[RMDB]
RNA sequence: GGGAACGACUCGAGUAGAGUCGAAAACAAACAAACCAACCACACUCAGAGCCCAAAUAAACCGCGAUAACCUCAUCUCAGCGGCAGAGAUGAUUAGCAAGAAUACCUGCAAAGGGCUCUGACAAAACAUGACCUAUCACUUCGGUGAUAGGUCAUGAAAAGAAACAACAACAACAAC
Reactivity to DMS in 0.01 (KOAc 150mM, MgCl2 10mM, bicine 150mM(pH8.5), 24C), signal-to-noise 2, nucleotides 027 to 126: c170a090a110a130c160a000a080a090c090c060a090a130c180c170a140c140a110c300u000c020a000g000a010g020c040c000c000a110a080a050u060a000a030a170c130c010g000c050g000a040u000a100a000c250c130u000c000a000u000c000u000c000a170g070c020g000g020c000a190g000a000g030a000u000g000a000u000u010a140g000c070a030a000g000a200a040u060a050c050c000u020g040c110a060a170a150g000g000g030c000u000c040u000g000a020c290a040a050a090a150
Reactivity to 2A3 in 0.01 (KOAc 150mM, MgCl2 10mM, bicine 150mM(pH8.5), 24C), signal-to-noise 4, nucleotides 027 to 126: c040a020a080a000c040a070a090a000c030c040a020a030c050c020a070c010a030c070u040c000a000g010a010g000c020c010c010a060a150a030u210a050a110a040c080c050g030c030g020a020u090a100a080c020c020u020c020a020u020c000u010c010a030g020c010g110g000c040a010g010a000g000a020u000g000a020u060u090a030g030c010a040a020g040a160a050u130a210c010c030u070g040c060a070a040a080g010g000g000c000u000c000u000g000a000c000a000a080a000a010